[RMDB]
Conditions: 150 mM KOAc, 10 mM MgCl2 and 150 mM bicine (pH 8.5), 24 C. Structure probing data (2A3 and DMS) for a 177-nucleotide construct. In probing experiments dimethyl sulfate is read out at A N1 and C N3, which are open when not base-paired. For DMS the reverse transcriptase was MarathonRT. Source: RMDB library OK1LIB, as collected in RNAgym.
RNA sequence: GGGAACGACUCGAGUAGAGUCGAAAAGGGUAGCAUCAAUGACUUACAUCAAGGGGGCUUCAUCUCCACUGAAAGCAGCUCUAAGGCUUGCAGGGGUAUAUAUCUGGGCUUUUGGAGAGUCAGACGACAGCUGCGACAAUUUCGAUUGUCGCAGCUGAAAAGAAACAACAACAACAAC
Reactivity to 2A3 in 0.01 (KOAc 150mM, MgCl2 10mM, bicine 150mM(pH8.5), 24C), signal-to-noise 2, nucleotides 027 to 126: g000g050g000u100a020g040c000a080u150c060a060a170u130g150a030c040u000u130a030c000a110u140c150a090a120g090g000g000g010g000c020u070u020c010a060u030c110u000c000c030a110c130u050g060a110a060a050g050c020a010g040c010u000c040u130a130a040g060g000c020u030u060g000c010a060g060g000g000g030u020a040u000a020u000a000u300c000u000g000g000g030c020u050u110u030u040g050g000a200g000a000g030u000c000a000g010a000c040g000a000
Reactivity to DMS in 0.01 (KOAc 150mM, MgCl2 10mM, bicine 150mM(pH8.5), 24C), signal-to-noise 1, nucleotides 027 to 126: g000g000g020u010a140g030c150a100u020c150a180a080u000g040a040c110u030u050a200c140a160u010c070a000a130g000g020g020g020g030c000u040u050c050a030u000c090u020c020c000a000c080u030g000a000a070a080g010c010a000g000c090u020c210u050a110a080g000g000c000u000u000g010c010a040g000g000g020g020u000a030u040a070u020a020u000c060u000g000g000g000c020u000u070u000u020g020g000a100g000a110g000u000c070a010g000a090c230g000a300